[RMDB]
RNA sequence: GGGAACGACUCGAGUAGAGUCGAAAAAUUUUCCGAGGACCCGUUGAGUAGUGCCAGCAGCUGUGAUCAUUAUUCCAUCUCUUCGUGCCCGUCCAUUAUUUUCCACGAACGGGGUUCGCCGGAGGGCACCUCACCUUGCAUUCGUGCAAGGUGAGGUAAAAGAAACAACAACAACAAC
Reactivity to DMS in 0.01 (KOAc 150mM, MgCl2 10mM, bicine 150mM(pH8.5), 24C), signal-to-noise 2, nucleotides 027 to 126: a140u030u000u000u010c000c020g040a230g030g000a100c050c010c000g020u000u010g020a130g020u000a070g030u000g000c060c030a030g000c050a040g000c030u000g000u040g000a070u010c060a060u000u000a180u020u000c010c020a080u010c060u000c010u010u010c060g020u000g000c000c000c010g020u000c020c040a070u030u070a070u030u000u010u010c020c050a160c080g000a050a090c090g010g010g010g050u000u020c050g020c120c010g050g000a060g000g000g030c110
Reactivity to 2A3 in 0.01 (KOAc 150mM, MgCl2 10mM, bicine 150mM(pH8.5), 24C), signal-to-noise 3, nucleotides 027 to 126: a000u120u080u030u010c000c000g010a110g000g020a040c030c040c030g060u030u060g050a060g100u090a020g020u050g120c040c030a050g000c020a010g010c060u040g020u050g100a070u050c030a060u010u140a060u190u030c010c020a090u010c050u000c000u060u070c020g050u050g030c000c010c000g050u020c020c000a010u070u080a080u110u170u080u010c040c020a040c060g090a050a000c030g120g010g000g000u050u060c030g000c040c000g000g050a030g010g030g030c020

Structure probing data (DMS and 2A3) for a 177-nucleotide construct. For DMS, 2,943 sequencing reads were counted. The RNA was probed in 150 mM KOAc, 10 mM MgCl2 and 150 mM bicine (pH 8.5) at 24 C. 2A3 adducts were read by reverse transcription with SuperScript II with manganese.